RNA sequence: GGGAACGACUCGAGUAGAGUCGAAAAACGGAUGGUACGCCUUCCGACCAUUGGGUAGAAGCGUUCAAUCAGCACCGUGACGGUGCAGAUGGGAAAUUGCCCAUGAUACGCACCAUACGUGGUGCGAAAAAGCCAUCGGUGUUCGCACCGAUGGCAAGGAUGUACGUUGCUUCGGCAACGUACAUCCAAAAGAAACAACAACAACAAC
Reactivity to 2A3 in 0.01 (KOAc 150mM, MgCl2 10mM, bicine 150mM(pH8.5), 24C), signal-to-noise 2, nucleotides 027 to 156: a000c010g020g010a000u020g000g000u060a060c180g080c020c010u040u030c020c000g010a030c020c000a120u130u000g030g000g000u050a070g000a200a000g030c040g050u020u090c080a050a040u000c010a010g010c010a020c000c000g040u190g300a160c230g010g000u000g000c020a020g000a000u010g000g000g000a000a130a050u040u000g020c010c000c000a010u110g030a010u030a020c000g000c000a000c000c000a010u050a160c170g100u080g000g030u010g000c020g010a050a000a000a010a010g000c010c010a000u000c000g000g000u010g060u100u040c100g020c110a000c010c010g000a000u000g010g000c000a000a020